[RMDB]
RNA sequence: GGGAACGACUCGAGUAGAGUCGAAAAGGGGUCUCGACAUGGACGCUACCUAAUCACAUCAUAGCCACAGCUAUGAAGUACACUGAAGCCUCCACGGUGUAUGGAGCUGUGGCUAUGAUGUGAUUAGGGUCGUCCAACAGCGAGACGGAGGCACCCAGAACAUCAUGCAGUUCGCUGCAUGAUGUUCAAAAGAAACAACAACAACAAC
Reactivity to DMS in 0.01 (KOAc 150mM, MgCl2 10mM, bicine 150mM(pH8.5), 24C), signal-to-noise 1, nucleotides 027 to 156: g020g010g050g000u000c000u000c000g010a090c140a300u000g000g000a040c020g020c300u030a070c010c040u000a020a010u020c000a010c030a030u000c000a030u000a000g000c000c010a000c020a020g100c000u000a150u000g020a100a300g010u000a010c000a000c030u010g030a060a130g000c010c020u000c010c030a300c030g000g010u210g020u000a030u000g020g000a000g020c000u000g050u010g000g000c020u000a000u010g000a000u000g000u020g000a010u000u000a000g000g040g000u030c020g000u000c000c000a020a080c170a170g000c000g000a060g030a040c040g020g030a060g030g000c000a300c000c000c020a300